[RMDB]
RNA sequence: GGGAACGACUCGAGUAGAGUCGAAAACAACAGCAGUGUUCAUGCCUUUCGCUUUCAGAACUUUUGCCAGGUGAUGGAAAACUUCAGAACCCAUGCGGAUGGCUUCUUUCACAGUUUUCGCGCCAAACACCUGCUAUGGUUUCGACCAUAGCAGGUGAAAAGAAACAACAACAACAAC
Reactivity to DMS in 0.01 (KOAc 150mM, MgCl2 10mM, bicine 150mM(pH8.5), 24C), signal-to-noise 1, nucleotides 027 to 126: c050a090a110c110a070g000c010a030g040u000g030u000u010c050a130u000g020c030c020u000u010u010c070g010c060u010u060u000c060a110g000a060a070c040u000u000u000u010g010c060c000a160g000g000u000g000a150u000g000g010a030a010a030a020c040u000u000c080a040g020a060a080c230c030c030a050u000g000c150g060g020a040u010g010g010c180u000u000c040u000u000u020c070a080c110a020g000u000u000u000u000c050g010c070g000c000c070a060a070a190
Reactivity to 2A3 in 0.01 (KOAc 150mM, MgCl2 10mM, bicine 150mM(pH8.5), 24C), signal-to-noise 2, nucleotides 027 to 126: c020a000a070c030a010g080c020a020g030u030g010u060u050c030a020u070g040c000c000u070u110u080c040g000c030u030u130u110c100a070g030a090a090c020u100u100u100u110g060c010c010a030g080g010u070g050a110u070g070g050a000a040a030a020c010u100u110c020a050g010a060a040c010c030c010a020u080g030c040g130g110a010u010g010g030c030u000u010c020u050u140u080c080a100c030a040g010u000u000u010u090c090g020c030g020c010c000a040a140a040
Notes:
An RNA of 177 nucleotides, treated with DMS and 2A3 and read out base by base. Values cover nucleotides 27 to 126. The reactions ran in a buffer of 150 mM KOAc, 10 mM MgCl2 and 150 mM bicine (pH 8.5), at 24 C. DMS adducts were read by reverse transcription with MarathonRT.